[RMDB]
RNA sequence: GGGAACGACUCGAGUAGAGUCGAAAACAAUGUGUUCGCACAUUGAAAAAAGCGUACUACCCUGAGGACCAGGGAGCCUUGAGUCCCAAAUAGGACUCUGGGCGACGAUCUGGUCUACCCACCAGGGUAUCGCAAAAAACACCUGUUCGCAGGUGAAGCAAUAAAGCAGGUUCGCCUGCUUUAUUGCAAAAGAAACAACAACAACAAC
Reactivity to 2A3 in 0.01 (KOAc 150mM, MgCl2 10mM, bicine 150mM(pH8.5), 24C), signal-to-noise 1, nucleotides 027 to 156: c000a000a000u000g050u030g020u140u120c250g010c060a000c050a030u080u140g200a200a030a000a000a000a000g030c050g030u060a080c030u000a030c030c000c000u040g010a000g030g000a000c010c000a010g000g000g000a000g000c000c000u000u000g000a000g000u000c040c020c030a150a170a000u140a030g000g010a010c000u040c010u000g030g030g020c000g030a020c010g010a030u010c000u010g000g000u000c000u000a010c020c000c020a060c030c000a010g010g000g000u000a010u060c000g030c000a090a060a000a000a000a000c050a000c040c030u050g010u090u040c270g030c020a010g070g000u050g010a050a090